An RNA of 177 nucleotides, treated with DMS and 2A3 and read out base by base. The data come from the RNA Mapping Database (RMDB), library OK2TST. The DMS profile rests on 1,034 reads. The 2A3 profile rests on 740 reads.
RNA sequence: GGGAACGACUCGAGUAGAGUCGAAAAGCUGGGCAAGAUACAUACAUGCAGUAUACAGUAGAGUGCCGAGGUCAGUGCCUGGUGACUGGCACAUUAGGUCGAUCACUGAGGAUUACGUCCGGGAACGACCACCCCAUGAUUUCGAUCAUGGGGUGGUAAAAGAAACAACAACAACAAC
Reactivity to DMS in 0.01 (KOAc 150mM, MgCl2 10mM, bicine 150mM(pH8.5), 24C), signal-to-noise 1, nucleotides 027 to 126: g030c060u000g010g000g000c070a060a060g010a030u020a010c120a030u000a070c080a110u020g020c120a080g020u000a070u000a170c090a120g000u000a020g010a100g040u000g020c050c030g010a120g000g010u000c050a110g030u000g020c010c010u010g010g000u000g000a040c010u000g010g000c000a050c150a130u030u000a080g030g010u000c020g030a100u000c020a060c010u000g030a090g020g000a060u000u010a110c100g000u010c050c010g000g000g020a080a050c060g010
Reactivity to 2A3 in 0.01 (KOAc 150mM, MgCl2 10mM, bicine 150mM(pH8.5), 24C), signal-to-noise 1, nucleotides 027 to 126: g060c010u040g040g020g040c010a040a040g010a130u060a140c010a060u170a010c000a000u150g080c020a010g000u060a060u020a120c020a010g120u100a040g070a020g030u050g050c030c070g100a070g060g000u080c030a060g020u040g150c040c000u050g060g000u040g010a050c070u050g010g050c050a020c000a110u010u120a080g020g090u050c030g050a060u060c060a000c070u040g110a090g030g050a060u100u130a040c010g020u000c000c050g000g020g040a030a080c050g040